[RMDB]
An RNA of 177 nucleotides, treated with DMS and 2A3 and read out base by base. The data come from the RNA Mapping Database (RMDB), library M2PK90. The reactions ran in a buffer of 150 mM KOAc, 10 mM MgCl2 and 150 mM bicine (pH 8.5), at 24 C.
RNA sequence: GGGAACGACUCGAGUAGAGUCGAAAAACUUUUAGCGUUUGCAAGACGCUGUUCUUGCAAUGAUCUGCAUUUAGCGCACGGAGGUCCGAAAUCCAGAUCAACAUUUCGGACCUCCGCGCUAAUAAAAUGCGUUAUUUAUGUUCGCAUAAAUAACGCAAAAAGAAACAACAACAACAAC
Reactivity to DMS in 0.01 (KOAc 150mM, MgCl2 10mM, bicine 150mM(pH8.5), 24C), signal-to-noise 4, nucleotides 027 to 126: a090c060u010u000u010u000a090g010c020g030u010u000u000g010c010a010a010g000a020c020g020c290u010g020u000u000c000u000u000g010c010a020a050u010g000a090u010c060u030g030c110a140u000u010u000a010g000c020g020c060a090c190g050g020a020g020g000u000c000c000g000a000a020a010u000c110c120a150g000a150u010c220a080a130c150a030u000u000u000c000g010g010a020c000c000u000c000c000g000c000g000c000u000a020a010u000a030a040a050a070
Reactivity to 2A3 in 0.01 (KOAc 150mM, MgCl2 10mM, bicine 150mM(pH8.5), 24C), signal-to-noise 2, nucleotides 027 to 126: a000c010u130u110u090u130a010g040c030g050u030u020u060g000c000a010a000g000a010c030g070c300u160g070u150u000c000u000u010g000c020a010a050u070g060a080u060c050u050g040c020a030u030u030u020a000g010c000g000c020a020c140g000g010a000g000g020u000c000c020g040a000a000a000u060c090c050a080g060a260u110c070a020a070c010a060u000u020u020c000g000g010a000c000c010u000c000c000g000c000g000c000u000a000a000u010a000a000a010a020